[RMDB]
RNA sequence: GGGAACGACUCGAGUAGAGUCGAAAAUAGUAAUAAACCUCAUUUGUCGUGAAGAUAGCUAUCUGUUUAGCUGCCAUGAAGUCUUCAAACUUAUUUUUCUCAGUGACAAAUGAUGAUAAGGCUGUGGCAUGGCGCAAUUUCUUAACUUUGGUCAAAAGCAUAUUUACCUGUUCGCAGGUAAAUAUGCAAAAGAAACAACAACAACAAC
Reactivity to 2A3 in 0.01 (KOAc 150mM, MgCl2 10mM, bicine 150mM(pH8.5), 24C), signal-to-noise 2, nucleotides 027 to 156: u040a000g080u050a040a050u080a100a210a060c010c000u010c030a050u000u000u000g040u010c040g000u030g110a030a030g010a040u070a010g020c030u020a060u060c060u120g100u130u100u030a010g000c010u020g040c040c020a030u060g050a070a010g000u000c010u050u040c060a040a030a080c010u110u080a050u170u170u020u130u020c080u030c090a080g020u050g120a000c010a000a010a000u000g020a000u000g030a040u010a180a030g020g010c070u020g000u020g070g000c040a030u050g020g000c000g000c000a010a080u020u020u130c000u020u050a110a140c040u080u090u120g050g010u060c010a020a010a010a020
Reactivity to DMS in 0.01 (KOAc 150mM, MgCl2 10mM, bicine 150mM(pH8.5), 24C), signal-to-noise 2, nucleotides 027 to 156: u010a100g040u010a080a140u010a090a070a090c060c030u010c000a040u000u000u020g010u010c030g020u000g000a040a030g010a050u000a040g000c000u000a010u000c040u010g000u010u000u000a030g020c000u010g020c060c030a080u020g010a080a100g010u010c010u010u000c040a100a140a120c150u000u000a170u000u000u000u000u000c050u000c100a190g020u000g000a060c020a020a010a030u010g010a000u010g010a080u000a060a130g030g020c020u000g010u000g010g030c040a120u000g000g020c030g000c040a050a050u000u000u000c040u000u000a060a070c080u000u000u010g030g000u000c100a080a090a060a260
Overview:
Structure probing data (2A3 and DMS) for a 207-nucleotide construct. For DMS the reverse transcriptase was MarathonRT. For 2A3, 1,332 sequencing reads were counted. For 2A3 the reverse transcriptase was SuperScript II with manganese.